[RMDB]
RNA sequence: GGGAACGACUCGAGUAGAGUCGAAAAAGGAACGCUAGGGAUCCUUCAGCGGAGGACUGAAGAAACUCCGGUUUCUUCUUUCACUCUGUAGCUGGAAUCCUUGUUGCGCUUGCUGGCGAAACCUGCAGGAAGCUAGCUGGGUCCGCUAGUCGAGCGAGACACCUUUGACGUUCGCGUCAAAGGUGUCAAAAGAAACAACAACAACAAC
Reactivity to 2A3 in 0.01 (KOAc 150mM, MgCl2 10mM, bicine 150mM(pH8.5), 24C), signal-to-noise 1, nucleotides 027 to 156: a000g130g000a150a020c120g000c130u110a060g030g040g020a000u010c020c000u020u020c020a010g000c000g000g000a010g010g000a020c000u020g030a000a000g000a000a000a000c040u070c080c070g060g010u000u000u030c000u000u060c000u020u080u010c160a300c120u010c020u070g060u090a010g000c000u000g020g010a000a110u000c000c000u020u050g080u060u130g030c020g000c000u000u030g000c000u000g000g050c000g020a160a130a050c020c010u080g040c000a040g060g090a150a030g100c100u090a010g020c010u120g000g010g010u030c020c000g000c010u010a010g040u160c070g010a000g000c000g040a030
Background:
Source: RMDB library VIROID, as collected in RNAgym. Chemical mapping of a 207-nucleotide RNA with 2A3. 2A3 is a SHAPE reagent: it acylates the 2'-hydroxyl of flexible nucleotides of all four kinds. The 2A3 profile rests on 733 reads. The RNA was probed in 150 mM KOAc, 10 mM MgCl2 and 150 mM bicine (pH 8.5) at 24 C. For 2A3 the reverse transcriptase was SuperScript II with manganese.